Notes
Source: RMDB library OK2TRN, as collected in RNAgym. Structure probing data (DMS and 2A3) for a 177-nucleotide construct. For 2A3, 812 sequencing reads were counted. DMS adducts were read by reverse transcription with MarathonRT. The reactions ran in a buffer of 150 mM KOAc, 10 mM MgCl2 and 150 mM bicine (pH 8.5), at 24 C.
[RMDB]
RNA sequence: GGGAACGACUCGAGUAGAGUCGAAAAAUUCUUGGGAGUGACGCGCGCAACUGGCUUGAUAACUGUCAAGACCGAUCGAUCUUAAAACUCUAGAUCACCCAUCGAGUGCACAAGAUUACUGAUACAACGUCAAGAAGGAGUUCGCUCCUUCUUGACGAAAAGAAACAACAACAACAAC
Reactivity to DMS in 0.01 (KOAc 150mM, MgCl2 10mM, bicine 150mM(pH8.5), 24C), signal-to-noise 1, nucleotides 027 to 126: a030u000u000c040u030u020g030g000g040a070g040u000g020a140c070g030c080g010c050g060c060a080a130c170u050g020g030c020u000u000g000a000u000a070a090c120u010g020u000c030a000a000g000a100c080c020g000a100u010c030g010a060u020c040u000u000a060a030a100a050c050u050c000u010a080g030a070u000c040a060c050c030c060a300u000c140g000a030g050u000g010c140a100c070a070a050g000a070u000u000a180c160u000g000a130u000a040c130a040a260
Reactivity to 2A3 in 0.01 (KOAc 150mM, MgCl2 10mM, bicine 150mM(pH8.5), 24C), signal-to-noise 1, nucleotides 027 to 126: a000u030u040c020u030u050g000g000g000a010g000u020g030a010c060g040c010g000c020g000c080a140a080c070u040g080g020c030u020u050g070a040u050a180a190c040u100g040u170c010a010a000g070a150c000c010g000a040u070c050g000a000u020c020u030u070a090a100a020a000c010u070c050u000a110g020a140u030c000a040c000c010c000a000u010c010g030a030g000u140g080c050a040c040a200a030g030a250u020u080a150c040u040g020a030u040a130c150a090a020